Chemical mapping of a 170-nucleotide RNA with 2A3 and DMS.

[RMDB]
RNA sequence: GGGAACGACUCGAGUAGAGUCGAAAAAGCACUCCCGGCCGUAUGGUCGAGUGUCCCCCCGGAGGGAGAGAACCACGCGGAGAAGGCGGAAAAAUCACCUCCAGAGGACCCCUUCAGCGAACAGAAGUGAGCUUCCGCUUCGGCGGAAGCAAAAGAAACAACAACAACAAC
Reactivity to 2A3 in 0.01 (KOAc 150mM, MgCl2 10mM, bicine 150mM(pH8.5), 24C), signal-to-noise 6, nucleotides 027 to 129: a000g010c010a020c000u050c020c070c000g000g000c030c020g280u290a140u300g010g000u030c020g020a010g000u030g030u050c000c030c000c000c010c000g000g020a040g020g020g000a190g000a020g010a100a000c040c010a080c070g050c030g020g050a150g040a130a060g120g010c060g000g000a020a100a010a000a000u040c030a030c020c000u000c040c000a000g010a020g020g010a070c000c000c000c000u040u050c040a030g030c030g070a020a040c020a090g060a120a010g040u060g070a020
Reactivity to DMS in 0.01 (KOAc 150mM, MgCl2 10mM, bicine 150mM(pH8.5), 24C), signal-to-noise 4, nucleotides 027 to 129: a040g000c100a040c000u000c080c190c090g000g000c010c010g050u000a070u090g060g040u020c030g010a040g000u020g020u000c030c020c010c040c040c060g000g000a060g000g000g000a120g020a030g000a040a010c000c170a160c090g020c000g000g000a180g030a090a110g040g010c100g000g080a000a020a010a030a020u030c000a110c000c000u040c070c060a040g040a090g040g000a170c140c050c000c010u030u030c000a060g000c080g010a030a040c090a120g040a090a050g030u050g020a160

DMS adducts were read by reverse transcription with MarathonRT.